RNA sequence: GGGAACGACUCGAGUAGAGUCGAAAACGCGCGUAGCUCGAUGACCUGACUCCAAGCCUCUUUCAUAUUACUUAGCAGGCGUGUAACGAUACCACCAAGAACUGCUACUUCAAUUUCGGUGAGUUCGAACCCUACUUGCGUUCGCGCAAGUAGGGUUAAAAGAAACAACAACAACAAC
Reactivity to DMS in 0.01 (KOAc 150mM, MgCl2 10mM, bicine 150mM(pH8.5), 24C), signal-to-noise 2, nucleotides 027 to 126: c080g050c120g020c050g040u010a060g000c030u000c040g000a150u010g010a180c100c020u010g000a070c090u050c030c030a080a160g000c030c020u000c080u000u000u000c090a130u000a040u010u010a040c190u010u000a040g010c130a080g000g000c100g000u010g000u000a110a200c060g000a150u000a100c040c010a020c060c010a040a060g030a050a140c010u000g010c120u000a030c190u000u000c160a050a080u000u000u000c140g000g020u010g000a110g040u000u000c060g000
Source information
The record gives the reactivity of an RNA of 177 nucleotides to DMS. DMS adducts were read by reverse transcription with MarathonRT. It was measured as part of the RMDB library OK2TST. The RNA was probed in 150 mM KOAc, 10 mM MgCl2 and 150 mM bicine (pH 8.5) at 24 C.